An RNA of 177 nucleotides, treated with 2A3 and read out base by base. The reactions ran in a buffer of 150 mM KOAc, 10 mM MgCl2 and 150 mM bicine (pH 8.5), at 24 C. High 2A3 reactivity points to a flexible backbone, as in loops and unpaired stretches.
RNA sequence: GGGAACGACUCGAGUAGAGUCGAAAAUACACCCAUAAUCAAGCAACUCAAUCCUUAAAUUUUUCUCCUACUGAGUAUCUGGAAAACAGGUGCAGAAAUGGAUCAUUUGAGACACCAUAGAAAUCUGCUCGUACCAUCACUUCGGUGAUGGUACGAGAAAAGAAACAACAACAACAAC
Reactivity to 2A3 in 0.01 (KOAc 150mM, MgCl2 10mM, bicine 150mM(pH8.5), 24C), signal-to-noise 1, nucleotides 027 to 126: u130a040c040a060c000c000c000a040u160a000a140u080c060a200a000g060c020a000a050c040u010c060a050a080u210c000c000u230u200a070a170a220u040u110u000u070u000c000u000c020c010u030a090c000u030g000a040g000u040a000u060c050u060g000g070a000a000a110a080c000a000g030g030u000g090c000a030g030a020a000a020u200g000g000a000u050c000a050u030u000u070g050a060g000a060c020a070c000c000a000u050a150g140a030a040a030u000c040u000g000